[RMDB]
RNA sequence: GGGAACGACUCGAGUAGAGUCGAAAAACUCGGUACGCCGAGAAUAUACAUGAUGAUUAAGUUUCUACGAAUCACGACGGUCUUCUGACGUAUAAUAGAUGGAGAUGGUAGAACGUUCUGACCAUAAUCUCCAAGAUGAUUUCGAUCAUCUUGGAGAAAAAGAAACAACAACAACAAC
Reactivity to 2A3 in 0.01 (KOAc 150mM, MgCl2 10mM, bicine 150mM(pH8.5), 24C), signal-to-noise 6, nucleotides 027 to 126: a000c010u010c000g000g020u080a070c230g060c040c000g000a000g030a070a000u110a000u020a040c170a070u170g050a020u060g020a020u110u180a150a040g050u040u080u000c030u020a040c050g080a100a060u060c030a040c090g090a010c030g070g030u010c020u060u010c020u050g060a030c020g070u050a050u090a270a120u150a080g110a080u120g060g010a070g020a030u020g070g020u010a030g010a100a010c030g020u080u030c030u050g070a050c020c000a050u070a160a080
Reactivity to DMS in 0.01 (KOAc 150mM, MgCl2 10mM, bicine 150mM(pH8.5), 24C), signal-to-noise 4, nucleotides 027 to 126: a060c010u010c010g000g030u000a050c150g020c000c000g020a010g000a080a060u010a080u040a100c120a110u000g010a110u010g010a060u000u020a070a110g000u020u000u010c030u000a100c120g000a090a130u000c040a070c170g010a050c050g010g000u020c020u000u000c080u010g000a140c180g000u000a070u020a110a140u030a070g040a090u020g010g000a030g020a020u020g000g010u000a020g000a040a080c070g000u010u000c070u000g010a070c060c040a090u030a100a150